[RMDB]
RNA sequence: GGGAACGACUCGAGUAGAGUCGAAAAGUUAUGCUCUCGCUGCCUAAUGGCGGUGCGGGAAACCCACUCUAAAGUCCUUAGGGUUAGCCCCUUAAGGCGGGGUUCGGAGGCUCCUGGCAACAGAAGCUGAAACUGUGCACAUUCGUGUGCACAGUAAAUCUCCUACCCAAUUCGUUGGGUAGGAGAUAAAAGAAACAACAACAACAAC
Reactivity to DMS in 0.01 (KOAc 150mM, MgCl2 10mM, bicine 150mM(pH8.5), 24C), signal-to-noise 1, nucleotides 027 to 156: g020u010u010a050u000g010c030u000c000u000c010g040c000u000g020c010c020u000a200a180u030g010g020c030g010g090u000g000c050g020g030g010a060a090a100c030c020c050a110c140u010c090u000a090a090a100g000u000c060c020u000u000a020g030g000g010u020u000a210g010c250c250c010c000u010u000a000a040g000g060c070g010g000g020g020u000u000c060g010g020a300g010g000c050u000c010c010u040g000g010c140a100a150c030a050g000a000a030g030c030u010g010a090a060a050c020u000g000u000g050c010a040c000a100u010u000c270g050u000g040u000g000c000a000c010a010g010u000a010a060
Reactivity to 2A3 in 0.01 (KOAc 150mM, MgCl2 10mM, bicine 150mM(pH8.5), 24C), signal-to-noise 2, nucleotides 027 to 156: g050u160u180a130u300g000c030u040c000u020c030g000c030u000g000c010c010u250a300a150u220g000g000c030g010g010u000g000c020g020g010g000a040a010a000c010c010c020a030c020u030c080u070a210a200a280g140u120c010c000u000u000a000g030g010g000u070u080a020g050c000c000c000c000u000u040a010a010g010g000c000g000g000g000g000u150u240c140g110g070a040g040g010c010u000c010c010u020g080g000c020a010a000c000a030g020a040a000g010c000u040g000a070a000a010c000u000g010u000g000c010a000c000a010u000u090c060g120u060g000u000g000c020a000c000a000g000u000a000a000

Overview:
This 207-nucleotide RNA was probed chemically with DMS and 2A3. 2A3 is a SHAPE reagent: it acylates the 2'-hydroxyl of flexible nucleotides of all four kinds. For DMS, 1,724 sequencing reads were counted.